[RMDB]
RNA sequence: GGGAACGACUCGAGUAGAGUCGAAAACUUCCAGCGUUCGCGCUGGAAGAAAGGCCGAGUAGUGUUGGGUCGCGAAAGGCCAUAAAUCAACAAACACUCAGAAAAUCGGUAUCUUCGGAUACCGAAAGACUUUACUUUACUUCGGUAAAGUAAAGUCAAAAGAAACAACAACAACAAC
Reactivity to 2A3 in 0.01 (KOAc 150mM, MgCl2 10mM, bicine 150mM(pH8.5), 24C), signal-to-noise 2, nucleotides 027 to 126: c000u020u000c000c000a000g010c010g040u090u090c150g000c000g030c100u000g000g000a000a020g000a030a010a000g000g000c000c000g010a020g000u030a000g010u010g050u120u130g130g080g000u090c020g020c000g000a070a000a000g010g050c000c000a000u000a000a010a010u090c050a000a150c040a030a140a050c080a050c120u120c070a040g150a170a180a020a120u000c000g010g000u000a010u000c000u030u100c260g070g000a000u010a000c000c000g010a000a000a000
Reactivity to DMS in 0.01 (KOAc 150mM, MgCl2 10mM, bicine 150mM(pH8.5), 24C), signal-to-noise 2, nucleotides 027 to 126: c000u000u000c000c000a010g020c000g010u010u020c170g050c010g080c000u000g010g010a000a000g000a030a070a160g000g020c000c010g010a050g000u010a100g010u000g010u000u010g020g020g020u000c000g000c040g000a130a150a170g010g010c000c000a050u000a020a060a110u010c080a070a100c130a060a040a080c130a010c070u000c020a130g000a070a050a090a150u000c000g000g010u000a020u000c000u000u000c200g020g000a010u000a000c000c000g010a000a020a090